[RMDB]
RNA sequence: GGGAACGACUCGAGUAGAGUCGAAAAGCUGCCACAGACAGAGCCACCUUAACUCCUCAGGACAACCAGUGGCUUCCGACACACACUAUGCACUGGAGGGCAAGCAGCUCUCAGCUUGGGAGCAACUGAGGAUGGUGAACAGCCUGGGCAAGGAGUACAUACUGCGACCUUUCGAGGUCGCAGUAUGAAAAGAAACAACAACAACAAC
Reactivity to 2A3 in 0.01 (KOAc 150mM, MgCl2 10mM, bicine 150mM(pH8.5), 24C), signal-to-noise 1, nucleotides 027 to 156: g020c000u010g020c000c000a280c040a040g000a000c030a020g000a020g070c020c000a040c000c000u130u090a110a100c060u020c040c000u030c030a010g000g060a090c030a250a030c050c100a130g080u080g100g010c010u020u010c040c000g110a050c010a010c030a000c000a010c170u110a150u270g010c010a030c100u080g070g030a040g060g040g000c040a100a130g050c040a010g000c020u000c000u000c000a090g030c080u110u190g000g000g040a000g040c020a090a040c000u000g000a010g050g000a000u050g010g010u050g020a030a030c020a020g020c020c000u050g010g010g000c020a040a020g040g000a010g000u020a000

An RNA of 207 nucleotides, treated with 2A3 and read out base by base. Reactivities are given for positions 27 through 156. It was measured as part of the RMDB library OK3TST. The RNA was probed in 150 mM KOAc, 10 mM MgCl2 and 150 mM bicine (pH 8.5) at 24 C. For 2A3, 597 sequencing reads were counted.